The data come from the RNA Mapping Database (RMDB), library 15KREP.
Chemical mapping of a 177-nucleotide RNA with 2A3 and DMS.
Reactivities are given for positions 27 through 126.
For 2A3 the reverse transcriptase was SuperScript II with manganese.
RNA sequence: GGGAACGACUCGAGUAGAGUCGAAAAGACCGUCCCCUCGGUAAUGGCGAAUGGGACCCAGAAAUCUCUCUAGAUUCCGAUAGAGAAUCGAGAGAAAACUGGCUCUCCCUUAGCCAUCCGAGUGGACCUAGCGUACUUAGUUCGCUAAGUACGCUAGAAAAGAAACAACAACAACAAC
Reactivity to 2A3 in 0.01 (KOAc 150mM, MgCl2 10mM, bicine 150mM(pH8.5), 24C), signal-to-noise 1, nucleotides 027 to 126: g050a020c010c010g010u010c010c000c000c020u010c010g050g000u040a040a020u000g000g000c000g010a070a020u040g010g000g020a050c100c000c000a020g000a010a300a020u010c010u000c000u020c030u080a050g010a030u000u020c020c020g150a130u110a210g230a010g000a060a000u000c000g000a000g000a010g000a000a020a010a000c000u000g000g000c000u000c010u000c000c000c000u010u010a000g010c000c000a000u000c000c010g000a010g000u000g000g000a000c010
Reactivity to DMS in 0.01 (KOAc 150mM, MgCl2 10mM, bicine 150mM(pH8.5), 24C), signal-to-noise 1, nucleotides 027 to 126: g000a300c010c020g030u000c000c000c000c000u010c000g000g000u000a050a020u000g010g010c010g000a190a120u010g000g000g000a000c230c000c020a010g000a030a140a140u000c000u000c000u000c010u030a210g040a020u000u000c000c010g040a210u020a110g000a160g010a030a000u000c000g000a000g010a020g000a010a030a020a080c000u000g000g040c000u020c070u000c000c000c000u000u000a300g000c000c000a010u000c020c000g000a000g010u010g000g000a000c010